[RMDB]
RNA sequence: GGGAACGACUCGAGUAGAGUCGAAAAGGAGAGAGUGGUGCAAUGUCUGUGGCAUAAAAGAUGUUGUUCUACAAGGCUUAAAAGCUUGUUGUUACGUGGGUGUGCAAACUGUUGAAGAUCUGCGUGCGGAGAUUAUAGUUCGCUAUAAUCAAAAGAAACAACAACAACAAC
Reactivity to DMS in 0.01 (KOAc 150mM, MgCl2 10mM, bicine 150mM(pH8.5), 24C), signal-to-noise 8, nucleotides 027 to 129: g000g000a120g020a130g020a000g070u030g000g060u000g000c030a030a020u000g000u040c120u010g020u000g030g040c030a020u040a030a060a080a100g000a100u020g000u030u020g020u010u010c070u040a110c250a090a080g000g050c020u020u020a090a060a090a160g040c000u000u010g000u000u000g040u010u010a060c100g050u030g020g010g000u000g040u010g040c060a030a040a110c150u000g000u000u070g000a040a010g000a050u020c050u000g000c050g040u040g020c090g030g020a130
Reactivity to 2A3 in 0.01 (KOAc 150mM, MgCl2 10mM, bicine 150mM(pH8.5), 24C), signal-to-noise 7, nucleotides 027 to 129: g140g010a080g000a000g000a010g040u020g000g000u020g010c010a000a010u010g050u060c050u060g040u090g030g010c010a040u110a050a140a000a010g070a040u090g000u020u000g000u000u000c000u070a090c040a110a040g080g000c030u120u160a010a080a030a040g030c010u020u040g020u020u040g020u060u080a010c050g000u030g010g000g000u090g000u010g060c040a050a090a140c110u120g070u230u110g070a060a030g030a050u000c010u030g020c010g000u020g010c030g020g030a070